[RMDB]
RNA sequence: GGGAACGACUCGAGUAGAGUCGAAAAGCGCACUUGUCGUUAAACAGACUGGACAUGCGCGUAUACUUGCUCAGCAUGGUGGCCAGCACCGGGUGGGUGGCCUCUGAGAUCUCGGUCGGCAACUCCAGGUUGCCAAGGAGUUCGCUCCUUGGCAACCAAAAGAAACAACAACAACAAC
Reactivity to DMS in 0.01 (KOAc 150mM, MgCl2 10mM, bicine 150mM(pH8.5), 24C), signal-to-noise 2, nucleotides 027 to 126: g010c010g010c020a080c110u000u000g020u010c010g020u000u010a080a190a040c280a160g000a030c010u000g030g020a020c030a030u000g000c010g030c100g030u000a080u000a090c080u000u000g000c090u000c010a160g040c140a090u000g000g020u000g020g020c000c040a080g050c060a060c040c060g000g020g010u010g010g000g020u020g000g020c030c030u010c010u020g000a120g000a060u000c000u000c030g010g020u010c060g030g000c100a070a080c060u000c050c050a120
Reactivity to 2A3 in 0.01 (KOAc 150mM, MgCl2 10mM, bicine 150mM(pH8.5), 24C), signal-to-noise 1, nucleotides 027 to 126: g000c010g000c010a060c110u020u020g000u000c000g060u110u170a200a090a010c100a040g100a090c020u120g080g040a010c000a010u040g010c010g000c010g020u000a010u020a060c030u070u100g000c030u000c030a050g060c050a100u190g010g070u030g150g000c070c000a040g010c010a080c060c000g270g030g000u140g050g040g050u000g020g010c030c000u030c020u040g130a090g040a090u050c030u000c010g020g000u030c010g050g000c040a040a070c000u050c030c000a060
Chemical mapping of a 177-nucleotide RNA with DMS and 2A3. The data come from the RNA Mapping Database (RMDB), library OK2TST. DMS adducts were read by reverse transcription with MarathonRT. 2A3 is a SHAPE reagent: it acylates the 2'-hydroxyl of flexible nucleotides of all four kinds. The RNA was probed in 150 mM KOAc, 10 mM MgCl2 and 150 mM bicine (pH 8.5) at 24 C.